This 207-nucleotide RNA was probed chemically with 2A3 and DMS. 2A3 adducts were read by reverse transcription with SuperScript II with manganese. Reactivities are rounded to 0.1 and cut off at 0 and 3. It was measured as part of the RMDB library RNAMAK.
RNA sequence: GGGAACGACUCGAGUAGAGUCGAAAAAGUGGCUUCGGCCACUACUAGAGAUAUGGACCAAUCGUUAGCCCAAACUAUUAGGGUCGGAAACGACCCUAACGAAUUUGGGAACUACUAAUCGAUUGGUCCUAAGUCAUGCACAGACCUUCGGGUCUAAUUUAGUAAUUCAUUUCGAUGAAUUACUAAAAAAAGAAACAACAACAACAAC
Reactivity to 2A3 in 0.01 (KOAc 150mM, MgCl2 10mM, bicine 150mM(pH8.5), 24C), signal-to-noise 4, nucleotides 027 to 156: a010g010u000g010g000c000u040u080c290g130g000c000c020a000c000u010a000c000u010a010g160a010g000a040u000a000u040g000g000a000c000c000a000a010u010c010g000u020u000a040g030c000c010c020a040a010a020c140u000a000u010u000a000g000g010g010u000c000g000g000a000a000a000c000g020a000c000c080c000u000a000a000c010g040a300a300u000u000u000g000g000g000a010a000c010u100a010c000u010a010a060u130c060g000a030u000u000g000g000u010c010c000u000a010a000g000u000c000a020u110g020c080a170c020a070g040a000c020c000u070u130c230g070g010g000u020c000u000a000a010
Reactivity to DMS in 0.01 (KOAc 150mM, MgCl2 10mM, bicine 150mM(pH8.5), 24C), signal-to-noise 3, nucleotides 027 to 156: a070g010u000g020g020c020u000u000c300g070g000c000c000a000c000u000a020c070u010a120g000a220g000a030u000a030u000g000g000a030c000c000a020a010u000c010g020u000u000a030g000c000c000c000a000a010a040c050u000a050u000u000a010g000g010g040u000c010g030g010a020a030a070c010g010a010c000c000c000u000a000a000c000g010a020a020u000u000u000g030g010g000a090a010c090u010a300c020u000a010a040u000c040g020a000u000u000g010g020u000c000c000u000a020a030g000u000c030a110u000g020c070a140c110a090g000a040c000c020u000u000c220g030g040g030u000c000u000a010a040